[RMDB]
RNA sequence: GGGAACGACUCGAGUAGAGUCGAAAAUGUGCAGUGUUUGCAUAGUGAGCGGUAGUCUAUCAAGCUGUGCUGGCCAGCUCGAAUGCCGGCCGGGCCUGUAGUCUUCAGCUCGGUCAGAAAGCAGUGACAUCUAGCGUAGGUUCGCCUACGCUAGAUGAAAAGAAACAACAACAACAAC
Reactivity to DMS in 0.01 (KOAc 150mM, MgCl2 10mM, bicine 150mM(pH8.5), 24C), signal-to-noise 4, nucleotides 027 to 126: u000g020u000g010c020a040g030u010g010u000u010u000g010c020a030u010a070g030u010g010a060g020c010g010g020u000a030g010u010c050u010a050u000c080a050a060g000c060u000g020u010g020c030u010g010g020c030c020a060g010c020u000c150g010a110a090u010g010c010c020g030g010c000c040g000g020g000c030c040u010g010u000a070g010u010c080u010u000c040a060g000c000u000c060g010g000u000c050a080g000a100a090a090g000c050a060g010u010g020a210
Reactivity to 2A3 in 0.01 (KOAc 150mM, MgCl2 10mM, bicine 150mM(pH8.5), 24C), signal-to-noise 3, nucleotides 027 to 126: u110g020u020g000c020a020g030u020g090u300u230u040g050c020a000u040a080g130u110g060a030g020c030g040g030u040a010g040u030c010u030a090u140c040a030a040g020c040u050g030u100g060c010u030g030g040c020c020a030g010c000u010c070g130a140a050u160g000c010c010g010g010c000c030g030g020g000c010c000u030g010u060a030g050u030c010u040u030c000a000g000c020u000c010g000g020u030c010a000g060a150a080a000g000c020a020g040u020g110a020